Chemical mapping of a 207-nucleotide RNA with 2A3 and DMS. 2A3 adducts were read by reverse transcription with SuperScript II with manganese.

[RMDB]
RNA sequence: GGGAACGACUCGAGUAGAGUCGAAAAGAUUCUGGAGGCUAGGUGUUGAGAUGUCUGAGCACCUGUCAUGCUGGAUCCAUGAGUGACUGUGGAGCAGAACAACACCCCCACCCCACAAACAUGUGUGUCCCACAUAACAUGUUGGACAUAUAGUAUCGUUUGUUUAUAGAUUCGUCUAUAAACAAACAAAAGAAACAACAACAACAAC
Reactivity to 2A3 in 0.01 (KOAc 150mM, MgCl2 10mM, bicine 150mM(pH8.5), 24C), signal-to-noise 9, nucleotides 027 to 156: g040a040u120u060c040u080g030g040a030g020g010c080u150a020g000g030u020g040u040u080g090a120g020a140u190g130u140c060u090g050a020g010c010a010c010c030u030g030u030c020a040u160g030c040u050g020g050a060u020c030c020a050u140g030a030g070u060g050a060c060u070g010u050g030g030a050g030c050a020g050a080a030c070a080a020c000a110c050c000c010c000c000a060c020c010c010c000a040c030a030a130a010c100a100u130g010u000g000u000g000u030c010c040c000a010c000a000u120a070a070c070a070u070g000u000u000g000g010a000c000a000u020a000u010a010g070u060a080u140c080
Reactivity to DMS in 0.01 (KOAc 150mM, MgCl2 10mM, bicine 150mM(pH8.5), 24C), signal-to-noise 4, nucleotides 027 to 156: g000a120u010u010c020u010g030g010a110g000g020c060u010a040g010g020u000g000u000u000g030a100g020a210u010g000u000c050u040g010a120g020c030a020c030c010u000g000u010c020a090u010g000c010u000g010g010a080u010c070c020a060u010g000a150g040u000g020a090c110u010g040u020g010g020a140g010c030a050g000a060a110c030a090a090c050a150c010c000c020c020c040a140c050c010c010c000a040c110a060a060a090c070a080u000g020u010g010u000g010u010c010c010c040a030c020a050u000a090a130c090a300u010g020u000u000g030g000a030c000a030u000a040u010a050g000u000a090u000c100
The RNA was probed in 150 mM KOAc, 10 mM MgCl2 and 150 mM bicine (pH 8.5) at 24 C. It was measured as part of the RMDB library OK3TST.